[RMDB]
RNA sequence: GGGAACGACUCGAGUAGAGUCGAAAAGAUAUGGACCUGUACCCGUAGCCGAAGAACUAUAUCGGAAACGAUAUAGGGAGGCUACCCGUACUGGGUCCUAAGUCAAACUCUGCGUUCGCGCAGAGAAGCCUAUGUUUACCUUCGGGUAAACAUAGGCAAAAGAAACAACAACAACAAC
Reactivity to DMS in 0.01 (KOAc 150mM, MgCl2 10mM, bicine 150mM(pH8.5), 24C), signal-to-noise 1, nucleotides 027 to 126: g000a090u000a300u010g010g020a040c020c000u020g020u000a020c000c020c180g000u000a000g010c000c020g030a200a180g010a150a140c020u020a000u010a000u010c010g010g000a180a180a240c000g000a010u000a010u000a000g000g040g010a030g010g020c000u000a000c020c020c180g010u000a020c020u000g020g000g000u000c000c000u000a000a110g020u000c030a140a150a200c000u000c000u000g000c000g040u000u000c270g010c000g000c010a000g000a040g010a030a080
Reactivity to 2A3 in 0.01 (KOAc 150mM, MgCl2 10mM, bicine 150mM(pH8.5), 24C), signal-to-noise 1, nucleotides 027 to 126: g030a030u080a040u110g000g010a020c000c010u030g000u020a020c020c070c090g000u010a000g000c010c030g200a300a030g000a030a000c000u000a000u000a000u000c010g000g080a140a060a030c030g010a000u000a020u000a020g030g040g020a010g010g000c010u000a000c010c010c000g000u000a030c100u210g030g030g020u000c000c000u000a060a000g060u000c060a050a010a230c000u000c020u020g020c000g030u020u060c300g000c000g000c190a000g000a020g000a000a010